[RMDB]
Source information: The data come from the RNA Mapping Database (RMDB), library OK1LIB. An RNA of 177 nucleotides, treated with 2A3 and read out base by base.
RNA sequence: GGGAACGACUCGAGUAGAGUCGAAAACUGGCCAGCUCUGCCGAGCGCGCCAUUUCGCUGGCGAAGUCGGACGAUUUGCGGGAACGGAUUAUCAGCCGGCAGCAUGUUCUGAGCGGUGAUUUCCACCGUUGGACAGACCGUUCGCGGUCUGUCCAACAAAAGAAACAACAACAACAAC
Reactivity to 2A3 in 0.01 (KOAc 150mM, MgCl2 10mM, bicine 150mM(pH8.5), 24C), signal-to-noise 2, nucleotides 027 to 126: c040u050g050g000c000c030a040g000c000u000c000u110g020c010c110g070a190g000c110g000c000g000c020c000a000u060u130u100c080g010c040u020g020g060c020g020a170a040g140u100c050g050g090a050c030g020a090u050u110u180g030c020g030g080g060a080a140c080g020g000a030u060u000a120u210c060a000g090c030c020g000g010c020a030g010c000a000u100g030u200u000c040u010g020a030g040c040g000g040u080g000a090u050u020u000c000c010a070c000c080
Values cover nucleotides 27 to 126.